[RMDB]
RNA sequence: GGGAACGACUCGAGUAGAGUCGAAAAUCUUGCACCUUCGGGUGCAAGAAAAUGUAAGCGCAUGCGAGCGCACAGCGCACGCUGAAAAACUGCGCAUAAGAAAAACUCAGCACUUCGGUGCUGAGAAGUAAGAGUUAUACUUCGGUAUAACUCUUACAAAAGAAACAACAACAACAAC
Reactivity to 2A3 in 0.01 (KOAc 150mM, MgCl2 10mM, bicine 150mM(pH8.5), 24C), signal-to-noise 3, nucleotides 027 to 126: u010c000u000u000g000c000a000c000c000u030u050c220g150g000g020u000g000c000a000a000g000a000a010a000a000u120g020u050a150a050g000c010g010c010a010u060g000c020g020a010g000c010g000c030a070c060a290g000c000g000c000a010c020g000c000u060g050a060a050a060a020a040c070u020g000c010g000c020a030u150a120a050g110a010a060a030a010a030c000u010c000a000g000c000a010c010u040u100c230g080g010u010g000c000u010g000a000g000a000a000
Reactivity to DMS in 0.01 (KOAc 150mM, MgCl2 10mM, bicine 150mM(pH8.5), 24C), signal-to-noise 5, nucleotides 027 to 126: u000c000u000u000g000c000a010c010c000u000u010c170g040g010g030u010g000c000a000a000g000a000a030a080a090u010g000u000a120a110g010c010g010c010a010u010g010c010g010a020g030c010g020c010a100c180a110g010c010g030c010a030c020g030c000u000g000a070a060a080a080a100c290u000g010c010g020c010a090u020a040a090g010a050a080a050a120a100c010u000c000a000g010c000a000c000u000u010c160g030g000u000g010c010u000g000a000g000a010a060
An RNA of 177 nucleotides, treated with 2A3 and DMS and read out base by base. DMS adducts were read by reverse transcription with MarathonRT. For 2A3, 7,691 sequencing reads were counted. The RNA was probed in 150 mM KOAc, 10 mM MgCl2 and 150 mM bicine (pH 8.5) at 24 C.